[RMDB]
RNA sequence: GGGAACGACUCGAGUAGAGUCGAAAAUACUAGUAGCUAAUUGUAAUGGUAUUAAACAGAAUGGCAGAGCAAUACUUAAAAAUACUUGAGAGAAUACAAGUAGUUGCUCAAUUUUAGCUGCAUUACCAAGACACCACAAUUUCGAUUGUGGUGUCUUAAAAGAAACAACAACAACAAC
Reactivity to 2A3 in 0.01 (KOAc 150mM, MgCl2 10mM, bicine 150mM(pH8.5), 24C), signal-to-noise 1, nucleotides 027 to 126: u200a040c070u030a000g000u000a020g000c000u020a020a020u040u080g090u080a060a100u100g020g000u050a010u100u130a150a290a000c050a070g250a120a080u130g080g000c000a000g000a020g000c000a000a050u000a070c020u120u150a020a270a070a100a070u100a070c010u050u110g020a060g000a000g060a300a030u090a130c020a020a020g030u020a010g060u010u020g000c020u000c000a020a020u050u000u000u000a010g000c020u000g010c030a100u030u070a050c030c010
Reactivity to DMS in 0.01 (KOAc 150mM, MgCl2 10mM, bicine 150mM(pH8.5), 24C), signal-to-noise 1, nucleotides 027 to 126: u000a070c090u020a120g050u000a010g010c010u000a060a010u030u000g010u020a060a190u010g000g000u000a040u000u000a090a100a120c100a080g000a070a090u010g000g030c040a100g030a030g000c000a040a020u000a070c100u010u010a020a130a120a060a160u020a010c050u000u000g010a180g020a190g000a130a100u010a060c090a000a000g010u000a030g010u000u000g000c000u000c020a050a090u000u000u000u000a010g000c000u000g000c010a130u000u000a090c080c080

Description
The data come from the RNA Mapping Database (RMDB), library OK2TST. Structure probing data (2A3 and DMS) for a 177-nucleotide construct. The RNA was probed in 150 mM KOAc, 10 mM MgCl2 and 150 mM bicine (pH 8.5) at 24 C. For DMS, 763 sequencing reads were counted. 2A3 adducts were read by reverse transcription with SuperScript II with manganese.